[RMDB]
RNA sequence: GGGAACGACUCGAGUAGAGUCGAAAAUUAUAACGUGGCUGCCCGGCCUGGAACACUCCCACAACCUGCUCCAGAAGGACCCAAGGUUGACAGAUCCUUUCAGACCUAUGCUAAGGAAACAAAAUAACUCGUAAAGGGAAUUCGUUCCCUUUACGAGAAAAGAAACAACAACAACAAC
Reactivity to DMS in 0.01 (KOAc 150mM, MgCl2 10mM, bicine 150mM(pH8.5), 24C), signal-to-noise 1, nucleotides 027 to 126: u020u000a130u020a110a110c170g040u010g040g040c040u000g000c030c010c040g010g020c000c000u000g000g000a090a040c090a040c060u000c000c000c000a280c050a010a050c020c050u000g000c050u010c000c030a080g020a070a100g010g020a060c060c050c040a100a030g000g030u000u000g000a080c100a060g020a120u000c040c000u000u000u000c050a050g010a150c050c000u000a050u000g020c060u000a030a070g000g000a070a110a100c070a050a150a100a040u000a070a110
The record gives the reactivity of an RNA of 177 nucleotides to DMS. Reactivities are rounded to 0.1 and cut off at 0 and 3. The reactions ran in a buffer of 150 mM KOAc, 10 mM MgCl2 and 150 mM bicine (pH 8.5), at 24 C. The DMS profile rests on 654 reads. High DMS reactivity at an A or C suggests that its Watson-Crick edge is free. It was measured as part of the RMDB library M2PK90.